[RMDB]
RNA sequence: GGGAACGACUCGAGUAGAGUCGAAAAGACAGACACAGAGUGAGACACAGUCUCUGUCUCAGACACUGUGACAGUGACACAGUCUGACACACACAGAGAGACUGUCAGACACUGUCAGUCUGAGUGACUCCUAACUCAAGUUCGCUUGAGUUAGGAGAAAAGAAACAACAACAACAAC
Reactivity to DMS in 0.01 (KOAc 150mM, MgCl2 10mM, bicine 150mM(pH8.5), 24C), signal-to-noise 6, nucleotides 027 to 126: g020a120c090a050g000a110c100a040c040a080g010a050g010u000g010a140g010a150c160a080c110a120g000u000c040u000c010u000g030u000c030u000c000a030g000a050c040a090c220u010g020u000g000a000c030a030g020u010g000a120c060a020c050a010g000u010c010u000g000a140c150a070c110a080c230a100c220a120g000a150g010a030g010a040c020u000g010u010c070a070g010a130c010a020c030u000g000u000c030a100g020u000c010u000g000a050g000u000g010a170
Reactivity to 2A3 in 0.01 (KOAc 150mM, MgCl2 10mM, bicine 150mM(pH8.5), 24C), signal-to-noise 5, nucleotides 027 to 126: g050a020c050a020g040a010c000a000c010a070g070a020g110u060g070a090g050a050c070a010c020a220g110u020c000u000c010u050g060u010c000u000c010a010g000a010c030a010c150u160g050u090g120a010c010a040g040u020g020a010c010a000c010a050g020u000c000u030g100a030c010a000c010a010c000a000c070a110g130a010g010a000g000a200c010u000g020u040c100a010g000a020c010a000c010u000g000u020c030a030g000u000c010u020g000a000g000u020g030a020

Chemical mapping of a 177-nucleotide RNA with DMS and 2A3. DMS adducts were read by reverse transcription with MarathonRT. The 2A3 profile rests on 8,263 reads. Conditions: 150 mM KOAc, 10 mM MgCl2 and 150 mM bicine (pH 8.5), 24 C.